[RMDB]
RNA sequence: GGGAACGACUCGAGUAGAGUCGAAAAGUUGCGAAGUAGUCAGCAGCUGGGCUCGAGGUGGGACCAUCACUAAUAUGUGUAGUCUGGUUGCAACAUGCGUGAAAGUCUCGCGUCGAUCGCAACCGCGCGUAUGCUCGUGGUUCGCCACGAGCAUACGAAAAGAAACAACAACAACAAC
Reactivity to DMS in 0.01 (KOAc 150mM, MgCl2 10mM, bicine 150mM(pH8.5), 24C), signal-to-noise 3, nucleotides 027 to 126: g000u000u000g000c000g020a080a160g010u030a060g030u040c150a120g020c030a020g020c010u000g000g030g010c000u000c020g020a100g010g020u000g000g000g000a130c080c050a130u040c000a040c050u000a050a080u050a070u080g000u020g000u030a040g000u030c060u000g010g040u010u010g020c000a140a050c130a060u020g010c060g040u010g000a100a160a100g020u040c080u000c000g000c000g000u000c050g000a060u030c080g000c010a020a030c000c020g020c220g010
Reactivity to 2A3 in 0.01 (KOAc 150mM, MgCl2 10mM, bicine 150mM(pH8.5), 24C), signal-to-noise 5, nucleotides 027 to 126: g000u010u000g010c010g020a070a040g070u180a060g080u100c100a050g010c010a010g000c000u070g000g030g000c020u040c080g030a080g000g050u120g010g010g060a090c050c040a080u110c000a000c030u110a110a300u170a120u250g140u030g020u030a040g040u010c070u050g040g000u030u030g010c010a010a010c020a040u140g000c010g000u040g060a090a090a070g160u050c030u020c060g000c000g050u040c040g050a180u040c050g000c000a020a000c010c010g070c010g010